[RMDB]
RNA sequence: GGGAACGACUCGAGUAGAGUCGAAAAGUUAUGCUCUCGCUGCCUAAUGGCUGUGCGGGAAACCCACUCUAAAGUCCUUAGGGUUAGCCCCUUAAGGCGGGGUUCGGAGGCACCUGGCAACAGAAGCUGAAACUGUGCACAUUCGUGUGCACAGUAAACCAAAAGAUGUAUUCGUACAUCUUUUGGUAAAAGAAACAACAACAACAAC
Reactivity to DMS in 0.01 (KOAc 150mM, MgCl2 10mM, bicine 150mM(pH8.5), 24C), signal-to-noise 2, nucleotides 027 to 156: g000u000u000a070u010g020c020u010c000u000c050g040c030u000g000c020c010u000a130a130u000g020g020c020u000g020u000g000c060g000g010g010a040a050a070c000c000c030a160c120u000c080u000a090a080a160g000u000c010c000u000u030a040g000g010g000u010u010a160g020c140c210c000c000u000u000a030a020g020g080c000g040g000g010g030u010u000c020g010g010a300g020g000c030a040c040c040u000g020g000c060a070a140c030a050g000a070a070g010c020u000g000a130a050a040c010u010g010u000g000c000a030c010a120u000u000c300g000u000g000u000g020c010a000c000a000g020u000a010a100
Reactivity to 2A3 in 0.01 (KOAc 150mM, MgCl2 10mM, bicine 150mM(pH8.5), 24C), signal-to-noise 7, nucleotides 027 to 156: g070u120u130a130u270g060c030u010c000u000c010g010c010u030g000c000c020u290a300a200u290g000g010c050u040g090u090g050c010g020g010g000a050a020a030c030c030c000a040c040u160c080u150a150a070a300g300u020c000c000u000u000a000g000g010g030u050u070a030g030c000c020c020c000u020u040a000a000g000g000c000g000g000g000g000u010u180c110g090g020a030g030g000c000a000c000c000u030g270g000c000a030a000c000a010g010a010a000g010c010u010g010a070a010a010c000u000g000u000g010c000a000c000a010u040u080c170g100u050g000u000g000c000a000c000a000g000u000a020a000